[RMDB]
RNA sequence: GGGAACGACUCGAGUAGAGUCGAAAAGGAUAACACUGUUUUGCUAUUUCGACUAAUAACACAAUGAUACGUAAAAUAACUUUUUCACGUAUCAUUGUGUUAUUGGCCGAAAAUAGCAAAAUCGUAAUAUCCAAAUCUCGGCCUUCGGGCCGAGAAACAUUUCUGAAACGUUCGCGUUUCAGAAAUGAAAAGAAACAACAACAACAAC
Reactivity to DMS in 0.01 (KOAc 150mM, MgCl2 10mM, bicine 150mM(pH8.5), 24C), signal-to-noise 1, nucleotides 027 to 156: g010g000a040u010a000a200c260a030c000u020g030u010u000u000u000g050c030u020a000u000u010u000c000g000a020c000u000a030a000u010a010a030c000a010c000a030a000u000g000a020u000a000c010g060u000a030a000a010a010u000a180a220c300u000u010u020u000u010c040a010c020g030u000a000u000c000a010u000u000g020u000g000u000u000a010u000u010g000g000c000c010g050a020a000a020a050u000a020g010c000a000a000a000a000u000c300g000u010a180a260u010a020u000c010c010a070a060a140u010c000u000c000g070g030c000c000u000u030c300g100g030g040c020c000g050a000g000a000a070a110

Chemical mapping of a 207-nucleotide RNA with DMS. For DMS the reverse transcriptase was MarathonRT. The data come from the RNA Mapping Database (RMDB), library RFM130. For DMS, 1,812 sequencing reads were counted. Conditions: 150 mM KOAc, 10 mM MgCl2 and 150 mM bicine (pH 8.5), 24 C.